[RMDB]
RNA sequence: GGGAACGACUCGAGUAGAGUCGAAAAAGAGCGAAACCAGUGUGGUACGGUAUGGCAAAGCUUGCCUCGGAGCCAAGCGUGAGGGCUCCUGGGGCACCGCACGGGCGCAGUGCUGCGCGAGACUUUAGGCCCGUGACAUGUCACGGACAAAUUCCGUCCAUAAAGACUUCUUCGGAAGUCUUUAUGGAAAAGAAACAACAACAACAAC
Reactivity to 2A3 in 0.01 (KOAc 150mM, MgCl2 10mM, bicine 150mM(pH8.5), 24C), signal-to-noise 4, nucleotides 027 to 156: a010g070a010g030c030g030a120a050a040c050c070a080g040u040g010u040g060g010u090a050c070g010g030u060a060u060g090g000c060a080a050a040g020c030u060u080g010c000c000u010c010g010g000a000g010c010c020a090a080g080c060g100u120g080a150g020g000g030c000u010c010c020u080g030g010g000g000c010a000c000c050g030c000a010c030g010g010g000c040g000c020a030g030u080g130c070u050g010c050g000c010g010a040g020a040c040u110u120u100a100g040g000c000c010c020g010u000g030a020c030a080u170g050u070c010a010c060g010g030a030c050a040a080a060u160u060c030c040g010u020

Background:
Chemical mapping of a 207-nucleotide RNA with 2A3. Conditions: 150 mM KOAc, 10 mM MgCl2 and 150 mM bicine (pH 8.5), 24 C. The 2A3 profile rests on 2,733 reads.